[RMDB]
RNA sequence: GGGAACGACUCGAGUAGAGUCGAAAAGACGGAUUCUUCGGAAUCCGUCAAAGUGACGGUGAAAAAUGGCCAAUGCGCCACCUACCACCGACACAGGGCGCAAAACUGGAGUGUUCGCACUCCAGAAGUCAACAAAGAUGUUCGCAUCUUUGUUGACAAAAGAAACAACAACAACAAC
Reactivity to 2A3 in 0.01 (KOAc 150mM, MgCl2 10mM, bicine 150mM(pH8.5), 24C), signal-to-noise 3, nucleotides 027 to 126: g010a010c000g010g000a000u020u000c020u040u040c220g020g020a010a000u000c010c000g000u010c000a010a000a000g000u010g000a000c000g010g000u010g030a000a020a020a010a020u030g010g000c020c030a160a300u280g030c170g000c060c010a000c010c000u030a040c020c020a010c000c000g010a000c010a000c010a000g090g090g000c110g010c080a020a060a050a030c000u000g000g000a000g000u000g040u090u140c200g030c080a000c000u020c010c000a000g000a000a000
Reactivity to DMS in 0.01 (KOAc 150mM, MgCl2 10mM, bicine 150mM(pH8.5), 24C), signal-to-noise 3, nucleotides 027 to 126: g000a010c020g010g000a000u000u000c000u010u000c170g020g000a000a000u000c000c000g020u000c000a010a030a060g030u010g000a110c020g020g010u000g010a030a030a070a240a080u000g000g000c000c010a180a150u010g030c130g010c000c000a030c010c030u020a300c180c000a020c010c000g000a050c000a010c020a220g030g020g000c100g000c110a060a050a070a140c010u000g000g000a010g020u000g010u000u000c200g040c000a020c000u000c000c000a000g000a050a040